[RMDB]
RNA sequence: GGGAACGACUCGAGUAGAGUCGAAAAAGAGCCGGAUACGUCCGGCUCAACGGGGGAUACGUGUGGUGCCGUCCGCUCCCCCUAUGGCAUAACAAAUGCACCACACACUAGGCUACGGCCUAGUGAAACUCUAACACCCUUUCGAGGGUGUUAGAGUAAAAGAAACAACAACAACAAC
Reactivity to DMS in 0.01 (KOAc 150mM, MgCl2 10mM, bicine 150mM(pH8.5), 24C), signal-to-noise 3, nucleotides 027 to 126: a080g010a000g010c000c010g020g000a020u000a100c200g050u000c000c000g000g010c000u000c000a020a030c140g010g000g000g000g000a070u010a010c030g000u030g050u000g000g010u000g010c000c090g000u000c050c100g010c170u000c010c000c000c000c000u010a020u000g000g030c210a100u020a100a040c210a060a040a070u030g010c000a000c000c000a010c000a300c000a010c010u000a000g020g030c010u000a150c130g040g000c020c000u000a000g000u000g010a060a070
Reactivity to 2A3 in 0.01 (KOAc 150mM, MgCl2 10mM, bicine 150mM(pH8.5), 24C), signal-to-noise 8, nucleotides 027 to 126: a000g010a000g000c010c010g010g000a020u030a040c170g080u010c000c000g020g000c000u000c000a000a000c000g010g000g000g000g000a010u030a120c020g040u040g010u000g060g000u000g010c000c020g030u040c030c040g070c060u030c000c010c010c000c020u030a160u190g120g040c100a100u110a210a040c050a070a080a040u110g010c000a000c000c000a000c000a000c000a000c000u000a000g000g000c000u020a020c300g120g000c010c000u000a000g000u000g010a070a010

About this RNA:
Chemical mapping of a 177-nucleotide RNA with DMS and 2A3. In probing experiments dimethyl sulfate is read out at A N1 and C N3, which are open when not base-paired. Conditions: 150 mM KOAc, 10 mM MgCl2 and 150 mM bicine (pH 8.5), 24 C. The data come from the RNA Mapping Database (RMDB), libraries RFM100 and RFMREP. For DMS the reverse transcriptase was MarathonRT.